[RMDB]
RNA sequence: GGGAACGACUCGAGUAGAGUCGAAAAGCAUGUUUCUGAGCUGCCCAGUCCAAGCUGUGAGUAAUUAGUGUUGAGUUGAGCGAAGGCUUGGCUCAUGCAGGUUCUAGAGUCGGAGGGUAAUGCGUGAGGCUGGCUUCACAGAGCAGCGACUACUUCCGUGUGAUGGUAAGUUCGCUUACCAUCACACAAAAGAAACAACAACAACAAC
Reactivity to DMS in 0.01 (KOAc 150mM, MgCl2 10mM, bicine 150mM(pH8.5), 24C), signal-to-noise 1, nucleotides 027 to 156: g030c050a070u000g010u000u000u020c030u000g020a050g010c000u000g000c030c010c030a080g010u000c030c020a070a130g010c040u010g020u000g020a100g000u000a120a100u010u000a110g000u000g030u000u000g010a060g010u000u010g010a060g010c010g020a240a160g020g060c010u010u010g000g020c000u000c000a010u000g070c040a110g000g050u000u000c040u010a060g000a070g010u010c040g040g000a080g060g030g050u020a060a070u020g000c020g020u010g030a090g040g030c040u000g000g000c020u000u000c080a070c040a060g000a090g040c020a060g020c040g010a130c070u020a070c020u010u000c020c040
Reactivity to 2A3 in 0.01 (KOAc 150mM, MgCl2 10mM, bicine 150mM(pH8.5), 24C), signal-to-noise 4, nucleotides 027 to 156: g020c060a110u040g020u090u260u030c000u030g010a010g030c000u010g020c030c000c010a010g010u030c010c010a090a040g020c030u050g050u100g120a020g070u140a130a100u150u170a060g030u040g070u050u060g000a020g000u010u030g000a000g000c030g070a130a020g140g010c000u010u010g000g010c000u000c010a010u060g030c040a010g000g070u100u060c050u130a050g010a030g100u070c100g020g030a040g020g000g020u080a100a050u110g010c020g050u050g030a110g020g010c010u040g000g000c000u030u020c020a020c010a030g010a010g010c010a000g010c000g060a040c050u150a110c010u070u050c050c030